[RMDB]
An RNA of 177 nucleotides, treated with DMS and read out base by base. The data come from the RNA Mapping Database (RMDB), library TTRINS. For DMS, 1,228 sequencing reads were counted.

RNA sequence: GGGAACGACUCGAGUAGAGUCGAAAAGAUAUGGAUGCCCGGUAUGAGCAACAGCACAAUCAGGUACUUAGAUCGGAAACGAUCUAAGUACCUGAUUGUGACAUGCUCCUACCGGCAUCCUAAGUCAGAUUUGUAGUCUGUUCGCAGACUACAAAUCAAAAGAAACAACAACAACAAC
Reactivity to DMS in 0.01 (KOAc 150mM, MgCl2 10mM, bicine 150mM(pH8.5), 24C), signal-to-noise 1, nucleotides 027 to 126: g000a040u000a300u020g000g000a040u000g010c260c100c030g040g000u000a000u000g000a000g000c000a040a050c270a250g000c000a010c010a000a010u000c030a020g020g000u000a000c000u000u000a010g010a020u000c000g040g000a110a100a280c030g000a010u000c000u000a000a000g000u000a000c020c000u010g000a000u010u000g000u000g010a030c060a090u000g000c000u000c000c070u000a010c000c020g000g000c010a000u000c000c000u000a000a090g000u000c040a130
Conditions: 150 mM KOAc, 10 mM MgCl2 and 150 mM bicine (pH 8.5), 24 C.